Record summary
Structure probing data (DMS and 2A3) for a 177-nucleotide construct. For DMS, 829 sequencing reads were counted. Conditions: 150 mM KOAc, 10 mM MgCl2 and 150 mM bicine (pH 8.5), 24 C. It was measured as part of the RMDB library OK1LIB.
[RMDB]
RNA sequence: GGGAACGACUCGAGUAGAGUCGAAAAGUUAUGAAUCCCCAGCAGGAGUUAUUUUGUUAACACAGUUUUGGGACUAUAAUCCAGCAACUGGGCCAGACAAUUUGUUUACUCAACAUGGAUUAUGGGGGCGUCACCUAUGAUUCGUCAUAGGUGACGCAAAAGAAACAACAACAACAAC
Reactivity to DMS in 0.01 (KOAc 150mM, MgCl2 10mM, bicine 150mM(pH8.5), 24C), signal-to-noise 1, nucleotides 027 to 126: g000u000u080a040u160g000a290a180u000c020c000c120c040a080g000c000a070g000g000a100g020u000u000a000u000u000u000u020g000u010u000a090a190c020a010c000a030g000u000u000u070u000g000g000g030a230c010u030a070u000a110a100u040c000c000a020g000c300a010a070c030u000g000g000g000c060c120a030g000a000c030a110a170u000u030u000g000u020u000u030a040c000u000c010a160a080c260a210u000g000g000a080u040u100a070u000g000g030g000g000
Reactivity to 2A3 in 0.01 (KOAc 150mM, MgCl2 10mM, bicine 150mM(pH8.5), 24C), signal-to-noise 1, nucleotides 027 to 126: g300u280u150a050u210g180a000a110u120c040c000c000c000a000g000c010a050g300g000a010g050u060u000a040u080u100u060u000g060u080u050a160a030c020a000c050a210g050u000u080u040u080g000g030g080a000c010u000a040u060a180a020u000c000c000a000g010c150a000a170c020u000g060g160g000c000c040a080g010a020c010a060a060u090u070u090g140u000u080u000a060c080u000c000a000a010c080a070u100g000g060a080u010u020a100u110g000g000g000g120